[RMDB]
RNA sequence: GGGAACGACUCGAGUAGAGUCGAAAACCGCCCCCCGAGAGGGGAAGAGUGAGGCUUAUCCCGGGGAACUCGACUUAUCGUCCCCACAUAGCAGUUUCCAGGACCCCCUUCCAAAAAGACUGAGGGGAAGCCCACGUCUUCGGACGUGGGAAAAGAAACAACAACAACAAC
Reactivity to DMS in 0.01 (KOAc 150mM, MgCl2 10mM, bicine 150mM(pH8.5), 24C), signal-to-noise 4, nucleotides 027 to 129: c000c020g060c090c040c000c000c020c070g060a080g040a170g080g020g070g030a040a040g000a020g000u050g040a200g010g000c090u030u080a140u020c040c000c020g000g070g030g000a050a060c100u000c070g000a180c130u020u030a060u040c110g000u010c000c000c000c030a120c130a060u070a090g050c080a050g010u030u000u060c020c000a080g000g000a290c150c030c000c030c040u020u030c110c030a000a110a150a220a120g000a040c040u130g000a140g010g030g000g090a050a040g010
Reactivity to 2A3 in 0.01 (KOAc 150mM, MgCl2 10mM, bicine 150mM(pH8.5), 24C), signal-to-noise 3, nucleotides 027 to 129: c000c010g010c000c000c000c000c000c020g100a080g050a060g060g030g050g000a010a010g000a000g010u110g030a060g000g050c030u070u100a070u150c000c000c000g010g010g000g000a020a010c030u030c110g060a030c090u160u120a060u120c040g040u030c010c020c070c000a050c020a030u180a010g070c050a010g030u020u030u010c020c020a000g000g040a090c020c000c010c000c000u070u000c010c010a060a030a040a080a020g080a080c090u080g040a090g010g010g000g040a000a000g000

Source: RMDB library 15KLIB, as collected in RNAgym. Chemical mapping of a 170-nucleotide RNA with DMS and 2A3. DMS adducts were read by reverse transcription with MarathonRT.